This 207-nucleotide RNA was probed chemically with 2A3. Reactivities are given for positions 27 through 156. The 2A3 profile rests on 334 reads. Conditions: 150 mM KOAc, 10 mM MgCl2 and 150 mM bicine (pH 8.5), 24 C.
[RMDB]
RNA sequence: GGGAACGACUCGAGUAGAGUCGAAAAAUAAGAAACUAGUAGGGGUAGAAGGUGCUUAUCACUCAGUUGUAAAAGUGCUUAAUGAACCCUACACACUUAUUCUCAUUGGGUUAGCUUUGUUGGUAAUCGUUAACUACCAAAACUCCAAAACGGAUAACGUAUAGUCCGGAUUCGUCCGGACUAUACGAAAAGAAACAACAACAACAAC
Reactivity to 2A3 in 0.01 (KOAc 150mM, MgCl2 10mM, bicine 150mM(pH8.5), 24C), signal-to-noise 1, nucleotides 027 to 156: a000u040a000a010g030a010a260a030c210u150a070g000u000a000g000g050g050g000u120a020g050a100a010g040g030u050g090c000u090u090a020u280c000a050c050u060c160a140g030u260u080g010u070a050a050a050a050g010u010g020c010u090u080a120a050u050g050a040a040c000c000c000u010a000c000a000c000a000c000u030u010a000u030u060c020u000c020a180u000u090g020g020g020u020u070a020g000c070u230u170u120g000u000u050g000g110u190a060a060u110c050g000u050u070a040a000c010u030a050c030c050a020a080a030a030c070u100c080c000a070a010a030a130c200g010g070a070u210a130a000